[RMDB]
About this RNA
Chemical mapping of a 177-nucleotide RNA with DMS and 2A3. The RNA was probed in 150 mM KOAc, 10 mM MgCl2 and 150 mM bicine (pH 8.5) at 24 C. The data come from the RNA Mapping Database (RMDB), libraries RFM100 and RFMREP.
RNA sequence: GGGAACGACUCGAGUAGAGUCGAAAACGGAACUUGCUUCCUGAGCUGGGUGGGGCCGCAGAGACCAGAGAGAAGCGACUGUUUACUAAAAACACAGGUCCGUGCGAAGUCGUAAGACGAUGUAUACUCAUCCUUUUGCGUUCGCGCAAAAGGAUGAAAAAGAAACAACAACAACAAC
Reactivity to DMS in 0.01 (KOAc 150mM, MgCl2 10mM, bicine 150mM(pH8.5), 24C), signal-to-noise 3, nucleotides 027 to 126: c030g010g000a020a090c080u020u020g020c060u010u000c020c040u000g000a100g000c050u020g000g010g010u000g050g010g000g000c020c020g000c030a100g000a130g000a040c020c020a050g000a090g000a120g000a060a130g010c060g000a110c090u030g000u010u000u000a140c190u080a100a060a130a030a020c090a040c160a030g010g000u020c040c010g000u030g020c100g000a080a100g010u020c000g010u000a170a140g000a030c050g000a080u050g000u040a130u010a110c150
Reactivity to 2A3 in 0.01 (KOAc 150mM, MgCl2 10mM, bicine 150mM(pH8.5), 24C), signal-to-noise 3, nucleotides 027 to 126: c020g000g020a010a020c050u070u140g000c010u050u070c000c020u030g020a030g020c040u030g030g000g000u060g020g000g000g000c020c000g010c010a040g000a000g050a080c000c040a000g030a000g000a000g030a090a000g010c020g090a010c030u020g030u060u030u030a070c040u120a050a090a000a040a000c080a000c000a010g040g030u040c040c020g000u050g000c010g100a080a030g060u050c030g010u090a120a000g040a030c050g010a000u080g070u020a070u060a000c000